[RMDB]
RNA sequence: GGGAACGACUCGAGUAGAGUCGAAAAGGAUGCAACGAAACGGUUAUCAUCAUCAGGAACUAAAGUUUUUAUAACUGAACUAUGCUUUUUAUGUAAUUGACUGUUAAAGUAUGCAUAGUAAUUACUAACACUUACUACAUUUCGAUGUAGUAAGUGUAAAAGAAACAACAACAACAAC
Reactivity to 2A3 in 0.01 (KOAc 150mM, MgCl2 10mM, bicine 150mM(pH8.5), 24C), signal-to-noise 6, nucleotides 027 to 126: g090g020a020u020g000c010a030a000c020g020a090a010a000c020g020g010u030u030a040u070c040a000u010c000a000u010c020a020g020g030a030a020c030u080a180a080a120g010u000u010u000u080u080a280u080a090a040c030u020g010a010a010c010u020a020u080g020c000u030u070u010u040u030a040u060g030u030a080a170u110u060g030a030c010u020g000u060u060a100a060a010g040u050a140u080g000c010a000u020a010g020u050a040a110u130u080a030c030u030a070
Reactivity to DMS in 0.01 (KOAc 150mM, MgCl2 10mM, bicine 150mM(pH8.5), 24C), signal-to-noise 8, nucleotides 027 to 126: g020g010a050u000g010c040a030a040c030g000a230a090a070c040g010g020u010u000a040u000c050a070u000c030a030u000c090a040g000g010a040a060c090u010a070a120a060g000u000u000u010u020u010a070u010a070a080c080u000g010a090a080c100u010a080u010g000c030u000u000u000u000u000a020u010g010u000a080a080u010u000g010a030c050u010g010u000u000a030a070a090g010u010a050u000g010c010a010u000a030g010u000a070a050u000u000a090c100u000a100
An RNA of 177 nucleotides, treated with 2A3 and DMS and read out base by base. For 2A3 the reverse transcriptase was SuperScript II with manganese. DMS adducts were read by reverse transcription with MarathonRT. The reactions ran in a buffer of 150 mM KOAc, 10 mM MgCl2 and 150 mM bicine (pH 8.5), at 24 C. As a SHAPE reagent, 2A3 marks flexible, mostly unpaired nucleotides at the ribose 2'-OH.